[RMDB]
RNA sequence: GGGAACGACUCGAGUAGAGUCGAAAAAUUCCGAGGAUGUUUCCCAGCCAGGGAUUUUCGUCCUCGAGUUUCUUGAUGGUUCUCCUGCUCUUCCGGAGCCUUCUUUCGAGGUCUUCCGCGUCUUUUCACAACGCUAGCUUCGGCUAGCGUAAAAGAAACAACAACAACAAC
Reactivity to 2A3 in 0.01 (KOAc 150mM, MgCl2 10mM, bicine 150mM(pH8.5), 24C), signal-to-noise 5, nucleotides 027 to 129: a000u100u040c080c000g000a020g000g000a000u010g020u000u010u040c000c010c000a030g170c160c090a090g020g000g000a060u080u040u050u120c020g010u000c010c000u000c000g000a030g000u010u010u000c030u050u100g000a130u080g040g040u070u010c000u010c030c010u060g040c000u010c020u160u060c030c030g030g000a010g000c020c000u030u000c010u030u090u090c070g020a040g000g100u010c000u040u000c000c000g030c000g000u000c000u020u020u020u030c070a090c030a030
Reactivity to DMS in 0.01 (KOAc 150mM, MgCl2 10mM, bicine 150mM(pH8.5), 24C), signal-to-noise 2, nucleotides 027 to 129: a000u020u060c070c000g000a020g040g030a110u010g000u030u020u020c020c010c030a280g040c100c210a220g010g050g020a030u020u000u010u010c000g050u000c020c020u000c020g000a100g010u000u000u000c080u060u000g000a120u040g000g000u000u000c030u010c010c000u030g020c020u010c040u030u070c030c040g050g000a110g040c040c050u030u010c040u000u000u000c080g000a000g000g050u000c060u040u010c000c000g040c030g040u020c010u000u020u030u020c110a130c100a150

This 170-nucleotide RNA was probed chemically with 2A3 and DMS.